[RMDB]
RNA sequence: GGGAACGACUCGAGUAGAGUCGAAAAAGUCAGAGGGCGUUACCAUGCAAACUAGGGCUGGCUACUCUUGCACAGAAUCACAUCUCGAUAAUUGUCAGUGCAAGAAGGACAAUUAUACCAUUUAAUGAAAACGUUUACCUGUUCGCAGGUAAACGAAUCAAUAGGUCAGCUUCGGCUGACCUAUUGAAAAAGAAACAACAACAACAAC
Reactivity to DMS in 0.01 (KOAc 150mM, MgCl2 10mM, bicine 150mM(pH8.5), 24C), signal-to-noise 2, nucleotides 027 to 156: a170g000u000c000a040g000a120g010g010g050c090g010u000u000a100c040c050a100u000g020c040a050a070a100c090u000a120g010g010g010c010u010g010g010c050u000a120c010u000c050u000u010g000c000a060c070a130g000a130a140u010c060a090c100a110u000c060u000c050g010a080u000a050a030u000u000g010u010c000a260g030u000g010c040a030a030g010a080a170g000g000a050c030a060a050u000u000a080u010a180c120c090a150u000u020u010a090a140u010g010a070a060a070a120c010g020u000u000u010a010c010c010u010g010u000u010c300g050c010a010g000g040u010a000a000a020c000g010a000a040
Reactivity to 2A3 in 0.01 (KOAc 150mM, MgCl2 10mM, bicine 150mM(pH8.5), 24C), signal-to-noise 3, nucleotides 027 to 156: a000g040u010c010a010g040a080g030g070g000c020g020u010u070a070c040c040a070u170g000c060a100a110a070c060u080a080g090g090g000c000u000g000g010c010u050a030c000u000c000u000u010g000c010a010c000a020g110a090a110u120c030a050c040a240u060c030u010c100g040a010u010a030a020u020u010g000u000c020a020g000u000g000c010a020a010g020a010a010g020g000a000c000a000a000u020u000a010u030a130c030c050a100u130u170u160a140a140u190g090a040a100a010a020c000g000u000u000u000a010c010c000u000g030u040u060c200g000c080a000g010g000u000a000a000a000c000g000a000a010
Structure probing data (DMS and 2A3) for a 207-nucleotide construct. The reactions ran in a buffer of 150 mM KOAc, 10 mM MgCl2 and 150 mM bicine (pH 8.5), at 24 C. For 2A3, 1,926 sequencing reads were counted. Values cover nucleotides 27 to 156. High 2A3 reactivity points to a flexible backbone, as in loops and unpaired stretches. The data come from the RNA Mapping Database (RMDB), library M2RFOK.